Conditions: 150 mM KOAc, 10 mM MgCl2 and 150 mM bicine (pH 8.5), 24 C. Chemical mapping of a 177-nucleotide RNA with DMS and 2A3. It was measured as part of the RMDB library OK1LIB. For 2A3 the reverse transcriptase was SuperScript II with manganese. For DMS, 30,258 sequencing reads were counted.

[RMDB]
RNA sequence: GGGAACGACUCGAGUAGAGUCGAAAAGAGCGUUGGCGUAUAUCGCACUUCUGGCCAUGUCCUCGUUGUGGCUUAUUAGCGAAAUAUCCGGUACCGACGGUUGUCGGAAUGCUAAUAUAUACGGAAAGGGUAUUUCUUACUUCGGUAGGAAAUACCCAAAAGAAACAACAACAACAAC
Reactivity to DMS in 0.01 (KOAc 150mM, MgCl2 10mM, bicine 150mM(pH8.5), 24C), signal-to-noise 7, nucleotides 027 to 126: g000a080g020c060g010u000u000g010g000c050g000u010a070u020a060u030c050g010c040a100c060u020u020c060u010g010g020c020c030a070u020g010u010c030c010u010c140g020u010u000g010u000g010g000c090u020u000a020u000u000a020g010c010g020a070a090a100u040a100u000c020c020g010g000u010a100c010c020g010a090c100g020g020u030u040g010u000c000g000g010a040a050u030g000c010u000a030a010u000a040u030a070u020a070c050g010g010a080a110a110
Reactivity to 2A3 in 0.01 (KOAc 150mM, MgCl2 10mM, bicine 150mM(pH8.5), 24C), signal-to-noise 9, nucleotides 027 to 126: g070a010g020c060g010u040u060g050g010c020g030u040a060u030a020u230c040g040c070a100c060u090u020c050u090g070g000c010c010a050u090g070u080c020c030u040c050g040u030u060g010u010g040g000c020u020u040a020u020u030a020g000c020g070a100a050a060u180a080u030c010c010g020g020u030a020c010c010g080a070c140g090g080u090u140g010u030c000g000g020a020a030u090g000c000u010a010a000u030a030u010a010u020a070c060g030g030a080a070a080